RNA sequence: GGGAACGACUCGAGUAGAGUCGAAAAUCAGUGGGAAUAUACCACAACAUAGAGAUGCCAGAUUUAUUAACCCGUCGUCAGGACCAUGCAAGGCCGAUGAGCCUAACACUCAUAUGUACUGUCAGUGCCGUCUUAUGUAGUUCGCUACAUAAGACGGAAAAGAAACAACAACAACAAC
Reactivity to 2A3 in 0.01 (KOAc 150mM, MgCl2 10mM, bicine 150mM(pH8.5), 24C), signal-to-noise 8, nucleotides 027 to 126: u090c030a030g010u010g000g030g120a220a040u190a050u110a190c000c010a010c010a050a050c020a020u170a030g100a010g020a040u060g020c010c010a040g040a100u060u160u080a150u060u160a120a070c000c000c000g040u030c010g040u030c030a050g010g020a070c030c020a010u090g020c050a050a050g040g000c010c020g140a170u150g020a020g000c000c010u050a070a010c030a010c020u040c040a060u080a040u180g040u050a060c050u040g070u080c030a040g020u020g140
Reactivity to DMS in 0.01 (KOAc 150mM, MgCl2 10mM, bicine 150mM(pH8.5), 24C), signal-to-noise 3, nucleotides 027 to 126: u000c100a060g010u000g000g000g020a240a110u050a140u050a130c000c020a030c020a080a090c090a090u010a070g000a100g000a060u020g000c000c000a090g000a100u000u030u050a080u020u020a050a100c040c040c000g010u040c000g000u000c070a060g000g000a080c050c020a060u030g020c080a050a030g010g060c020c020g000a060u020g020a120g030c010c020u010a080a070c120a030c030u020c040a020u020a050u020g000u020a070c040u020g000u000c010a070g010u000g000
Chemical mapping of a 177-nucleotide RNA with 2A3 and DMS. Reactivities are given for positions 27 through 126. It was measured as part of the RMDB library OK1LIB. The RNA was probed in 150 mM KOAc, 10 mM MgCl2 and 150 mM bicine (pH 8.5) at 24 C.